[RMDB]
RNA sequence: GGGAACGACUCGAGUAGAGUCGAAAACUGAAGCAACACUGGCUUUAACCUUUGCUCCUUUGGAUACUGGGGUAAAAACAGAUACAGUUGAUUUGCAUAUUCUCGAAACAGAUGGAAUUGCUAAACCGAGCUACUGAAUUUUCGAAUUCAGUAGCUCAAAAGAAACAACAACAACAAC
Reactivity to DMS in 0.01 (KOAc 150mM, MgCl2 10mM, bicine 150mM(pH8.5), 24C), signal-to-noise 2, nucleotides 027 to 126: c060u010g020a090a130g000c060a040a060c110a090c010u010g010g000c110u020u000u000a110a110c070c030u000u000u000g020c300u000c030c010u000u010u010g020g000a090u010a080c050u000g000g030g000g010u000a010a050a040a030a060c080a030g000a100u020a070c110a070g000u000u000g000a100u000u000u000g010c020a060u030a080u000u000c020u000c060g020a130a050a100c260a070g010a180u010g010g010a070a110u000u000g020c040u000a030a060a090c240c060
Reactivity to 2A3 in 0.01 (KOAc 150mM, MgCl2 10mM, bicine 150mM(pH8.5), 24C), signal-to-noise 2, nucleotides 027 to 126: c040u060g050a060a000g090c010a040a070c020a010c080u050g060g000c040u070u050u060a040a050c010c000u020u040u060g010c000u000c000c020u130u070u170g140g010a060u060a230c040u050g000g000g000g000u010a010a020a020a000a010c030a020g060a050u160a070c000a020g020u020u030g060a100u070u000u130g040c020a020u050a090u150u020c040u010c030g120a200a170a050c030a030g090a100u130g000g040a050a060u070u040g000c070u100a010a050a050c070c090

An RNA of 177 nucleotides, treated with DMS and 2A3 and read out base by base. Conditions: 150 mM KOAc, 10 mM MgCl2 and 150 mM bicine (pH 8.5), 24 C. Reactivities are given for positions 27 through 126. The data come from the RNA Mapping Database (RMDB), library OK2TST. For DMS, 1,379 sequencing reads were counted.